[RMDB]
RNA sequence: GGGAACGACUCGAGUAGAGUCGAAAAAGCUGAAUGAGUGUCCUAACUUGAUUCUUAGAGCAGGCUGUCCCAAGUCAGGGUGGAGGGGGCGGCAUCACUGAGCUCUCGGCGCCAUGGUGGCAGUAUGGAACCGGAUAGUGUUCGCACUAUCCGGUUCAAAAGAAACAACAACAACAAC
Reactivity to 2A3 in 0.01 (KOAc 150mM, MgCl2 10mM, bicine 150mM(pH8.5), 24C), signal-to-noise 3, nucleotides 027 to 126: a000g060c090u050g040a030a040u120g010a040g070u030g000u040c040c050u040a080a090c030u120u070g070a020u180u070c060u060u140a040g010a030g080c050a050g080g000c000u000g020u070c020c000c000a030a010g150u070c060a030g030g100g000u110g020g060a030g000g010g000g000g000c000g030g000c010a000u070c010a030c070u090g010a010g000c000u000c000u000c050g050g000c020g000c000c000a020u040g020g000u030g030g000c010a020g030u060a100u210g080
Reactivity to DMS in 0.01 (KOAc 150mM, MgCl2 10mM, bicine 150mM(pH8.5), 24C), signal-to-noise 1, nucleotides 027 to 126: a000g000c070u000g010a090a130u010g000a020g030u020g000u020c010c070u020a080a050c200u030u000g000a090u000u000c050u000u000a060g000a150g000c020a080g020g020c010u000g000u000c000c030c000a100a090g000u030c100a060g040g000g090u020g000g000a170g000g000g000g000g010c120g000g000c030a040u120c070a050c180u000g000a180g000c080u000c050u020c000g000g000c070g000c000c030a100u000g040g000u000g000g000c060a000g000u000a050u010g000

An RNA of 177 nucleotides, treated with 2A3 and DMS and read out base by base. DMS adducts were read by reverse transcription with MarathonRT. Values cover nucleotides 27 to 126. High DMS reactivity at an A or C suggests that its Watson-Crick edge is free.